[RMDB]
RNA sequence: GGGAACGACUCGAGUAGAGUCGAAAACUUCCGCCGCCAUGCGGUCACGGAUUUCCUGUUCGGUGACGACGGCUCAGAAGCUGAUAGUGCUGGGCUUGAUCAUUUUAACCGUCAUGCCGCUCUCCGCUUCAAAUCGUCUGGAUUGGUGAGGAUGAGGAGUAGUGCUAACAUUCGUGUUAGCACUACUAAAAGAAACAACAACAACAAC
Reactivity to DMS in 0.01 (KOAc 150mM, MgCl2 10mM, bicine 150mM(pH8.5), 24C), signal-to-noise 3, nucleotides 027 to 156: c090u000u000c020c020g030c030c030g000c010c060a090u000g020c060g020g020u000c080a060c040g000g000a160u010u000u010c090c070u000g010u020u000c040g030g000u000g010a060c010g020a050c040g020g020c050u000c080a140g010a060a040g010c040u000g000a120u000a070g030u010g040c050u010g020g030g000c040u000u000g010a100u000c080a160u010u010u000u010a050a130c050c040g020u010c020a090u000g020c000c010g030c020u000c020u000c030c020g020c030u000u010c040a060a070a100u000c030g000u000c040u000g010g020a140u000u010g020g020u010g000a110g010g020a070u000g000a160g010g020
Reactivity to 2A3 in 0.01 (KOAc 150mM, MgCl2 10mM, bicine 150mM(pH8.5), 24C), signal-to-noise 5, nucleotides 027 to 156: c030u060u020c010c010g010c020c030g000c020c080a070u180g050c080g060g020u040c040a020c070g000g050a040u050u070u090c020c020u070g050u080u040c030g030g020u030g020a030c040g000a010c000g010g020c040u050c080a030g010a040a020g000c010u020g040a090u100a070g060u080g050c070u140g060g010g000c000u060u090g060a060u090c080a110u070u160u120u270a090a050c050c040g010u000c030a030u090g020c010c010g000c010u010c000u000c010c010g010c000u030u050c020a070a070a080u040c020g020u000c030u040g050g000a100u080u170g020g020u050g040a090g020g040a060u110g060a060g050g050